Structure probing data (2A3 and DMS) for a 207-nucleotide construct.
For 2A3, 3,418 sequencing reads were counted.
RNA sequence: GGGAACGACUCGAGUAGAGUCGAAAAAGCAUACCAGCUCGUACGCGAGCUCGUAUGCAAAAAUUGGUGUAGCCUUACCGUAGUAGGCACAAAAACGUCAGCUGGAUCUACGGAUCCAGCUGACGAAAAAAGUGUUUUGUGUUCGCACAAAACACAAGAUGAUAGGUUUGUUCGCAAACCUAUCAUCAAAAGAAACAACAACAACAAC
Reactivity to 2A3 in 0.01 (KOAc 150mM, MgCl2 10mM, bicine 150mM(pH8.5), 24C), signal-to-noise 2, nucleotides 027 to 156: a000g000c000a000u000a000c010c020a020g030c000u000c010g040u040a060c250g000c000g110a000g000c000u000c010g000u000a000u000g020c000a060a000a090a000a030u100u180g000g000u040g110u180a030g000c000c000u000u000a000c010c050g030u000a000g000u000a000g010g010c010a000c030a040a040a030a010a000c020g000u000c010a000g010c000u000g010g000a000u000c010u040a050c240g090g000a000u000c000c010a000g020c000u000g000a020c000g020a000a000a000a000a000a010g000u000g000u000u000u000u000g000u000g040u050u070c090g010c070a000c010a000a000a000a000c000a000c000a000a020
Reactivity to DMS in 0.01 (KOAc 150mM, MgCl2 10mM, bicine 150mM(pH8.5), 24C), signal-to-noise 1, nucleotides 027 to 156: a170g030c000a030u000a020c000c020a030g010c000u000c000g040u000a140c270g040c010g000a020g040c010u000c100g000u000a000u000g030c010a030a000a080a080a150u000u020g000g020u000g000u010a100g030c030c000u000u000a140c030c080g050u000a090g040u000a020g010g080c010a100c110a030a050a040a090a090c020g010u000c000a000g050c000u000g010g000a030u000c000u000a130c300g050g000a010u000c000c000a040g000c000u000g000a000c010g010a000a020a080a090a060a090g000u000g010u000u000u000u000g020u000g010u000u020c280g000c020a020c010a020a000a020a000c000a000c020a000a060

DMS (dimethyl sulfate) methylates the pairing face of unpaired adenines and cytosines. 2A3 adducts were read by reverse transcription with SuperScript II with manganese. For DMS the reverse transcriptase was MarathonRT. Source: RMDB library M2RFPK, as collected in RNAgym.